[RMDB]
RNA sequence: GGGAACGACUCGAGUAGAGUCGAAAAAAAGCUGGAGCAAAGAGCGUUUGCUUCAAGGAAACUGACAGGUACAAAAAAGGUUGCUGGACGGAACUCUGGAAAGACUAUCUUUUGAUGGAGCCAAUGAUUUGCUCGUAUAGUUCGCUAUACGAGCAAAAAAAGAAACAACAACAACAAC
Reactivity to DMS in 0.01 (KOAc 150mM, MgCl2 10mM, bicine 150mM(pH8.5), 24C), signal-to-noise 2, nucleotides 027 to 126: a040a060a080g020c020u010g010g010a030g010c000a000a010a060g020a190g050c200g000u010u000u020g020c020u000u000c000a040a050g000g000a040a000a060c070u030g000a080c100a160g000g020u010a090c030a000a000a070a080a050a050g000g020u000u010g030c020u010g010g000a080c050g000g000a060a010c070u000c090u000g000g010a110a020a010g010a100c080u010a050u000c000u020u030u050u020g060a060u000g000g000a110g000c040c030a080a020u010g000a070
Reactivity to 2A3 in 0.01 (KOAc 150mM, MgCl2 10mM, bicine 150mM(pH8.5), 24C), signal-to-noise 2, nucleotides 027 to 126: a000a000a020g070c040u010g000g030a000g000c000a000a040a000g140a140g000c080g030u000u020u040g020c000u000u040c030a020a030g080g010a130a090a000c060u070g090a000c050a040g010g040u100a060c050a000a090a000a080a030a000g140g000u010u000g030c060u040g010g040a030c080g000g000a080a060c030u030c000u070g050g000a070a060a000g040a010c050u100a040u120c000u010u020u030u030g140a130u120g060g000a020g020c000c010a000a100u050g020a030
Chemical mapping of a 177-nucleotide RNA with DMS and 2A3. The reactions ran in a buffer of 150 mM KOAc, 10 mM MgCl2 and 150 mM bicine (pH 8.5), at 24 C. The 2A3 profile rests on 675 reads. For DMS the reverse transcriptase was MarathonRT. Source: RMDB library RFM100, as collected in RNAgym. Values cover nucleotides 27 to 126. 2A3 adducts were read by reverse transcription with SuperScript II with manganese.